RNA sequence: GGGAACGACUCGAGUAGAGUCGAAAAGAUAUGGACGAUAGGGUGGGAAUAGCAUCGAUCUCAUCGUAACAUCAUUCGGAAACGAAUGUGGAUGAGGGAGCUAAUCACCACCCUAUCGUCCUAAGUCCAAUGCAUCCAUCUUCGGAUGGAUGCAUUGAAAAGAAACAACAACAACAAC
Reactivity to DMS in 0.01 (KOAc 150mM, MgCl2 10mM, bicine 150mM(pH8.5), 24C), signal-to-noise 4, nucleotides 027 to 126: g000a080u010a300u010g000g010a030c010g010a020u000a020g010g000g030u010g000g000g010a120a190u000a010g020c000a300u000c220g000a060u010c000u000c000a000u000c010g020u000a080a190c210a060u010c000a000u000u000c000g020g010a110a140a160c000g020a010a010u000g030u000g010g000a010u000g000a010g010g000g010a020g010c000u010a020a050u010c100a240c000c000a000c000c000c000u000a000u000c010g000u000c000c000u000a000a030g010u000c030

Chemical mapping of a 177-nucleotide RNA with DMS. The data come from the RNA Mapping Database (RMDB), library TTRINS. The reactions ran in a buffer of 150 mM KOAc, 10 mM MgCl2 and 150 mM bicine (pH 8.5), at 24 C. DMS adducts were read by reverse transcription with MarathonRT.